The record gives the reactivity of an RNA of 207 nucleotides to DMS and 2A3.
RNA sequence: GGGAACGACUCGAGUAGAGUCGAAAAACUGCAUCUACGGAUGCAGAACUACGUUCAUCCAAUUUAUUUGGACGCAUGAAAUGAGAAUAGGGAACGGGAUUCACAUACGCAGGCUACGGCCUGCGAAAAAACUCCUUAUGCUUCGGCAUAAGGAGAACACAGUUAUAGCCUUCGGGCUAUAACUGUGAAAAGAAACAACAACAACAAC
Reactivity to DMS in 0.01 (KOAc 150mM, MgCl2 10mM, bicine 150mM(pH8.5), 24C), signal-to-noise 1, nucleotides 027 to 156: a140c010u000g000c020a030u010c000u010a130c300g070g020a030u000g030c000a000g000a020a060c020u000a010c000g000u000u000c000a060u000c050c150a000a190u000u000u000a120u040u010u000g030g010a080c000g050c030a010u010g010a060a050a160u000g010a180g010a040a070u000a110g000g020g000a020a080c060g000g050g000a300u000u000c000a030c030a130u000a100c010g010c000a020g030g000c000u000a160c190g000g000c030c000u000g030c000g000a000a010a020a090a070a000c000u000c000c000u000u000a000u000g030c010u000u000c300g100g050c000a000u000a030a010g030g000a010g000a010a010
Reactivity to 2A3 in 0.01 (KOAc 150mM, MgCl2 10mM, bicine 150mM(pH8.5), 24C), signal-to-noise 2, nucleotides 027 to 156: a000c000u000g000c000a010u010c030u010a030c200g160g000a000u000g000c000a000g000a010a010c000u130a060c000g010u020u030c040a020u030c020c000a030a060u020u120u140a230u060u140u100g030g010a010c030g020c110a080u150g080a080a130a050u130g010a090g070a080a040u120a100g100g000g000a000a000c010g020g000g000a020u100u170c050a020c010a070u150a030c020g010c010a000g000g000c000u010a060c190g050g000c000c010u000g000c000g000a010a000a000a000a010a010c000u000c000c000u010u000a000u000g000c000u010u010c120g110g000c000a010u010a000a000g010g000a000g010a000a000

Description: The RNA was probed in 150 mM KOAc, 10 mM MgCl2 and 150 mM bicine (pH 8.5) at 24 C.